[RMDB]
RNA sequence: GGGAACGACUCGAGUAGAGUCGAAAAAUGGGCGUCGGCGGAGAUCAACAGCUUGGCGGUGUCCACGCCGCGGUCUUGCAGUCCCCGCAGCUCAUUGAGCAGGACACCGGGAUCGAUCACCACGCCGCCUAUGUGGAAGAUUCGUCUUCCACAUAGGAAAAGAAACAACAACAACAAC
Reactivity to DMS in 0.01 (KOAc 150mM, MgCl2 10mM, bicine 150mM(pH8.5), 24C), signal-to-noise 5, nucleotides 027 to 126: a050u040g000g010g020c000g030u000c060g020g020c030g020g010a200g000a020u000c000a100a110c160a140g010c110u010u030g030g000c000g000g000u000g010u010c010c010a120c150g000c070c100g000c090g000g010u010c060u010u050g010c070a090g000u000c030c120c010c100g000c060a070g000c030u010c030a160u030u040g000a040g040c020a130g000g000a010c000a020c060c000g000g000g010a040u010c030g010a100u020c050a300c000c010a050c000g020c000c000g000
Reactivity to 2A3 in 0.01 (KOAc 150mM, MgCl2 10mM, bicine 150mM(pH8.5), 24C), signal-to-noise 9, nucleotides 027 to 126: a000u060g030g000g010c030g020u050c160g010g000c010g020g000a020g010a000u010c030a030a200c030a110g150c080u110u180g090g030c010g010g000u010g010u000c020c050a070c120g040c040c030g010c030g010g030u060c080u100u200g040c030a030g060u100c010c010c000c010g000c010a030g000c000u010c050a240u100u250g020a010g020c040a040g000g000a000c000a000c020c010g000g040g000a030u020c020g020a050u030c000a000c020c000a010c000g010c000c000g000